This 177-nucleotide RNA was probed chemically with DMS and 2A3. Values cover nucleotides 27 to 126.
RNA sequence: GGGAACGACUCGAGUAGAGUCGAAAAGAUAUGGAAGAUGUUAGGACAUGAUCGCACAUCGGAAACGAUGUGAUGAUCAACAGCCUACAUCUUCCUAAGUCAAAAGGAAUGCCGUUCGCGGCAUUCCGGGAUUACUCCUGUUCGCAGGAGUAAUCCCAAAAGAAACAACAACAACAAC
Reactivity to DMS in 0.01 (KOAc 150mM, MgCl2 10mM, bicine 150mM(pH8.5), 24C), signal-to-noise 1, nucleotides 027 to 126: g000a010u010a030u000g000g000a000a000g010a000u000g010u000u000a000g020g000a070c120a170u030g010a000u000c000g000c010a010c000a010u000c000g040g000a000a020a030c010g020a010u000g000u000g000a000u010g000a000u000c000a120a050c200a110g000c000c000u000a020c000a000u000c010u000u000c000c010u000a000a020g010u000c000a120a120a130a200g010g000a020a020u000g000c010c020g020u000u010c250g010c040g000g000c010a000u000u010c010c000
Reactivity to 2A3 in 0.01 (KOAc 150mM, MgCl2 10mM, bicine 150mM(pH8.5), 24C), signal-to-noise 1, nucleotides 027 to 126: g030a010u020a000u000g020g000a000a020g000a020u110g030u300u300a030g040g030a100c230a300u300g000a030u010c000g000c010a000c000a010u000c000g000g100a030a010a010c010g010a010u000g000u000g020a120u070g000a010u000c010a030a040c100a020g000c030c000u010a010c000a020u010c000u000u010c010c000u000a000a000g000u000c000a040a250a000a000g010g010a020a000u000g000c000c000g040u070u150c300g020c000g210g020c010a000u000u030c010c000
The 2A3 profile rests on 3,814 reads. It was measured as part of the RMDB library TTRDES.